[RMDB]
RNA sequence: GGGAACGACUCGAGUAGAGUCGAAAAGAUAUGGAGUAGCCAUGCUGCUCGAAGAACUCGGAAACGAGGGAGAGCAGAACUACAUGAAGCUACUCCUAAGUCAAAGGUCAUGGUUCGCCAUGACCAAGUUAAAGCAUAGCUUCGGCUAUGCUUUAACAAAAGAAACAACAACAACAAC
Reactivity to 2A3 in 0.01 (KOAc 150mM, MgCl2 10mM, bicine 150mM(pH8.5), 24C), signal-to-noise 3, nucleotides 027 to 126: g040a010u060a040u150g010g000a000g000u010a000g010c010c010a010u010g000c010u010g000c000u010c020g130a110a050g020a030a020c000u000c000g010g020a060a080a070c010g010a000g010g010g010a050g000a000g010c010a010g020a050a030c140u230a020c030a010u020g080a150a030g000c000u000a000c010u010c000c000u010a050a020g030u000c050a100a070a060g000g000u000c000a000u010g000g080u030u080c300g020c060c000a000u000g000a000c000c020a000a000
Reactivity to DMS in 0.01 (KOAc 150mM, MgCl2 10mM, bicine 150mM(pH8.5), 24C), signal-to-noise 4, nucleotides 027 to 126: g010a030u000a300u010g000g010a020g000u000a000g010c000c020a030u000g000c010u000g000c010u010c020g010a090a120g000a150a200c010u010c010g010g000a150a080a210c030g010a020g000g000g000a090g000a010g000c000a000g000a060a030c050u010a300c010a010u000g000a110a080g010c010u000a010c000u000c000c010u000a010a090g000u000c040a090a110a120g010g010u000c000a010u000g000g000u010u000c290g020c000c000a000u000g000a000c000c000a010a030